The data come from the RNA Mapping Database (RMDB), library OK2TST. This 177-nucleotide RNA was probed chemically with DMS.
RNA sequence: GGGAACGACUCGAGUAGAGUCGAAAAACUGUGAGAUUACAUUUUAGUUCUCUUGCAUUGUUAGUGUUAAGCACACCCACUGAAGGGAAACAGGACUUAAUCAUAGACUAUUGCCUUCACCUGUUACCAAAAACAAGAGCUUCGGCUCUUGUUUUUGAAAAGAAACAACAACAACAAC
Reactivity to DMS in 0.01 (KOAc 150mM, MgCl2 10mM, bicine 150mM(pH8.5), 24C), signal-to-noise 1, nucleotides 027 to 126: a020c060u000g040u000g020a030g020a010u000u010a010c010a200u010u010u000u020a220g020u000u010c020u000c020u000u010g000c030a000u020u010g000u000u010a080g010u000g030u000u010a050a090g000c030a060c000a200c000c020c030a110c200u020g030a020a050g000g020g010a050a050a050c080a060g000g020a230c060u010u010a040a050u050c280a110u010a020g000a060c010u000a100u010u000g010c000c020u000u000c050a080c230c050u000g030u000u000a110c150